[RMDB]
RNA sequence: GGGAACGACUCGAGUAGAGUCGAAAAGAUGGCGCAGGGCAUUACGAUGGGCGAUGAGUUCCAUCAACGCAAUAUUGCUUCCUCUGCACUGUUAAUGCGUGCGCUGGCCCCACAAAUUGCUCGCCUCUCUACCUUGCCUGUUCGCAGGCAAGGUAGAAAAAGAAACAACAACAACAAC
Reactivity to DMS in 0.01 (KOAc 150mM, MgCl2 10mM, bicine 150mM(pH8.5), 24C), signal-to-noise 1, nucleotides 027 to 126: g020a110u000g000g060c000g010c070a070g030g000g010c000a020u020u030a090c180g000a040u000g010g020g000c020g000a160u020g000a200g010u010u020c000c010a010u000c010a130a150c120g050c080a050a100u020a150u000u000g000c040u000u000c040c050u010c160u000g010c000a120c140u010g000u000u000a000a010u000g010c010g000u000g020c050g010c050u000g000g010c040c010c020c140a050c240a060a040a090u030u000g010c040u010c000g000c040c080u000c140
Reactivity to 2A3 in 0.01 (KOAc 150mM, MgCl2 10mM, bicine 150mM(pH8.5), 24C), signal-to-noise 2, nucleotides 027 to 126: g100a020u220g040g000c010g020c010a000g020g080g010c000a020u030u020a030c080g020a030u000g000g030g000c040g120a150u270g060a090g110u300u200c010c000a010u000c010a010a010c030g000c010a050a110u120a100u190u150g030c020u150u090c040c090u020c070u060g020c020a020c060u050g050u220u090a070a060u090g010c000g020u010g010c010g020c010u020g050g030c000c000c000c000a050c100a030a040a010u080u030g020c000u010c000g030c010c030u020c000